[RMDB]
RNA sequence: GGGAACGACUCGAGUAGAGUCGAAAAAGGACCAGAACUUGGCUUGAACAUUUUAUUUGUCGGCAUUCAUAAAGAAUUAAUAGAUGCUUAUGAUAAACAGAUUGAUGUUGCACGUAAAAUGAUUAACGUGGGUUACAGUGUUCGCACUGUAACCCACAAAAGAAACAACAACAACAAC
Reactivity to 2A3 in 0.01 (KOAc 150mM, MgCl2 10mM, bicine 150mM(pH8.5), 24C), signal-to-noise 1, nucleotides 027 to 126: a000g120g000a170c070c000a070g000a000a160c250u230u110g000g000c000u050u080g090a040a040c000a140u000u000u000u140a050u190u300u210g000u000c000g130g000c000a000u080u080c060a000u000a160a200a000g090a060a000u000u300a050a250u060a000g050a070u140g000c000u000u230a170u120g110a000u020a030a030a030c000a000g140a230u030u150g000a000u020g000u000u030g010c000a000c020g000u000a000a000a000a000u130g000a090u180u000a130a000c000
Notes
Chemical mapping of a 177-nucleotide RNA with 2A3. The RNA was probed in 150 mM KOAc, 10 mM MgCl2 and 150 mM bicine (pH 8.5) at 24 C. It was measured as part of the RMDB library OK1LIB. For 2A3 the reverse transcriptase was SuperScript II with manganese.